[RMDB]
RNA sequence: GGGAACGACUCGAGUAGAGUCGAAAAGAUAUGGAAAUCUACGACUCGUUGAAAGCUACCAUACUUAAGGUCGGAAACGACCUUAAGUAUGGUAGCUGGAGAGUCUUUGGUAGAGUUUCCUAAGUCACCAUAGUACAUCGUUCGCGAUGUACUAUGGAAAAGAAACAACAACAACAAC
Reactivity to DMS in 0.01 (KOAc 150mM, MgCl2 10mM, bicine 150mM(pH8.5), 24C), signal-to-noise 2, nucleotides 027 to 126: g010a050u020a300u000g010g010a010a020a060u000c000u000a010c010g000a020c000u000c000g010u000u020g000a240a140a040g000c000u000a010c000c000a010u000a010c000u000u000a000a010g010g020u000c010g020g010a130a080a190c020g020a010c000c000u010u000a010a020g000u000a000u000g010g030u000a000g000c000u000g000g000a070g010a010g010u000c010u000u010u030g020g030u000a010g010a100g010u000u000u000c000c000u000a090a160g010u000c070a260